[RMDB]
The record gives the reactivity of an RNA of 207 nucleotides to 2A3 and DMS. Reactivities are rounded to 0.1 and cut off at 0 and 3. Conditions: 150 mM KOAc, 10 mM MgCl2 and 150 mM bicine (pH 8.5), 24 C. For 2A3 the reverse transcriptase was SuperScript II with manganese. The data come from the RNA Mapping Database (RMDB), library M2RFPK. For DMS the reverse transcriptase was MarathonRT.
RNA sequence: GGGAACGACUCGAGUAGAGUCGAAAAUGAGAUAGCUAAAUCACCUCGGUAUGAUUAGGGUGAGACCUAGGAACCGUAGGGGUAUUCUCAAAGGAAGCUUUUGCAGUGACGGCCAUGUAAGUGGGAUAAGAACCAACCCACUUCGGUGGGUUGGUAAGAUCGUAUGGUAGUUCGCUACCAUACGAUCAAAAGAAACAACAACAACAAC
Reactivity to 2A3 in 0.01 (KOAc 150mM, MgCl2 10mM, bicine 150mM(pH8.5), 24C), signal-to-noise 2, nucleotides 027 to 156: u150g020a040g000a050u060a040g070c060u070a000a110a150u100c040a060c030c010u050c030g030g000u290a240u140g070a150u080u060a020g020g020g030u050g080a060g030a040c000c010u000a010g010g040a020a040c030c000g010u020a010g000g000g010g000u020a120u090u030c030u020c000a020a010a010g090g040a050a030g030c020u070u040u070u130g000c020a070g030u000g030a020c030g020g020c040c000a010u050g020u100a070a110g000u040g050g020g010a050u010a140a060g020a030a000c000c000a000a000c000c000c020a000c000u050u020c070g080g000u010g000g000g000u000u000g000g010u000a000a000
Reactivity to DMS in 0.01 (KOAc 150mM, MgCl2 10mM, bicine 150mM(pH8.5), 24C), signal-to-noise 1, nucleotides 027 to 156: u000g000a050g010a080u000a070g000c060u000a090a070a170u020c020a120c030c010u010c010g010g000u000a100u010g010a210u010u000a010g010g000g000u000g010a280g000a110c010c030u000a090g010g000a150a060c050c000g030u020a070g000g000g020g040u000a100u010u000c010u000c070a070a150a130g000g010a050a100g010c030u000u000u000u000g030c050a080g020u010g010a080c080g010g010c000c040a030u000g010u010a050a070g010u010g010g020g010a100u000a080a160g010a050a070c110c000a010a050c000c000c000a030c030u000u000c150g020g010u000g010g020g030u010u000g010g010u000a000a040